RNA sequence: GGGAACGACUCGAGUAGAGUCGAAAACUCACCGCGCACGCAUCGAAAGGGCCACCGCGUUUGACCGUAUGGAUAUGCAAUAAGUCAUGUAAAACCGUGUUCAAUAAAAAGCACUUUAUUUUUACAUGCACUAAGGCUCUCGUUUUUUACUCAUUCGGUGUGUUAGGUGUUUCGACACCUAACACACAAAAGAAACAACAACAACAAC
Reactivity to 2A3 in 0.01 (KOAc 150mM, MgCl2 10mM, bicine 150mM(pH8.5), 24C), signal-to-noise 1, nucleotides 027 to 156: c040u000c000a000c000c020g070c000g120c060a100c110g180c060a150u130c120g150a140a080a140g000g000g000c010c020a040c000c050g020c030g020u030u010u140g180a110c120c000g000u120a060u080g080g100a080u000a070u250g000c010a020a040u120a130a000g000u020c000a000u000g000u000a000a000a020a020c030c040g080u020g000u020u010c150a050a080u270a190a000a050a000a000g000c020a000c000u100u180u190a080u070u100u000u000u040a000c000a000u000g060c010a000c000u010a020a020g170g000c000u000c000u000c000g040u000u000u000u000u110u190a160c120u100c060a080u300u110c040g150

The data come from the RNA Mapping Database (RMDB), library OK3TST. The record gives the reactivity of an RNA of 207 nucleotides to 2A3. For 2A3 the reverse transcriptase was SuperScript II with manganese. Conditions: 150 mM KOAc, 10 mM MgCl2 and 150 mM bicine (pH 8.5), 24 C. The 2A3 profile rests on 313 reads. Reactivities are given for positions 27 through 156.